[RMDB]
RNA sequence: GGGAACGACUCGAGUAGAGUCGAAAACAACCCUACUGCGCUAGUUUACGCACCGAAAGGCGCAGUAGGGGUAAAUUCUCCGCUAGCGGAGCGGUAACAACAAAACAAAACAAAACAAACAAACAAAGACGUACGAUGUGUUCGCACAUCGUACGUCAAAAGAAACAACAACAACAAC
Reactivity to 2A3 in 0.01 (KOAc 150mM, MgCl2 10mM, bicine 150mM(pH8.5), 24C), signal-to-noise 1, nucleotides 027 to 126: c050a010a000c010c000c000u000a000c000u040g000c000g000c000u050a030g060u190u100u140a120c100g000c050a030c000c030g130a290a130a090g000g000c000g000c000a000g000u000a000g000g000g000g000u000a000a000a000u110u070c030u000c040c000g000c210u090a010g040c030g000g120a010g000c000g040g020u180a000a080c130a000a000c000a020a090a080a000c110a000a180a080a000c120a150a070a000a000c020a040a170a000c030a000a060a000c030a030a070a000